Structure probing data (2A3 and DMS) for a 177-nucleotide construct. The 2A3 profile rests on 6,616 reads. For 2A3 the reverse transcriptase was SuperScript II with manganese. Conditions: 150 mM KOAc, 10 mM MgCl2 and 150 mM bicine (pH 8.5), 24 C. The data come from the RNA Mapping Database (RMDB), library OK1LIB.
[RMDB]
RNA sequence: GGGAACGACUCGAGUAGAGUCGAAAAGAAGGAUGUCUGCCCGCGUACAAUACUCAACAAUGCUCCCAUCUUAUCUAGCUUGGCUCCGCUCUCUGGGUUUGAGUUAUAACUUGCAGCGCACCGCUGGAUCACAGCUCAUAUUCGUAUGAGCUGUGAUAAAAGAAACAACAACAACAAC
Reactivity to 2A3 in 0.01 (KOAc 150mM, MgCl2 10mM, bicine 150mM(pH8.5), 24C), signal-to-noise 7, nucleotides 027 to 126: g130a040a010g100g030a060u120g040u070c030u040g040c000c010c000g020c030g030u070a050c050a120a090u050a100c030u030c040a070a050c020a080a120u130g020c010u030c000c020c000a040u030c040u100u110a100u070c040u040a010g030c030u030u060g020g000c010u020c030c020g010c010u010c000u000c010u030g040g050g030u020u070u060g070a070g020u090u110a130u030a180a080c040u040u100g010c010a010g000c020g010c040a040c040c070g000c020u020g020g010
Reactivity to DMS in 0.01 (KOAc 150mM, MgCl2 10mM, bicine 150mM(pH8.5), 24C), signal-to-noise 4, nucleotides 027 to 126: g010a080a090g010g010a090u020g020u030c040u010g010c020c000c020g000c090g010u000a060c100a050a060u040a050c040u000c030a060a100c120a110a120u030g000c020u010c010c000c010a070u000c040u010u020a060u000c060u030a080g020c030u010u020g020g010c020u000c030c080g010c040u010c030u000c010u010g010g000g010u000u000u000g000a110g000u030u000a080u030a080a100c060u000u000g000c030a090g010c040g010c040a060c070c050g010c030u000g000g010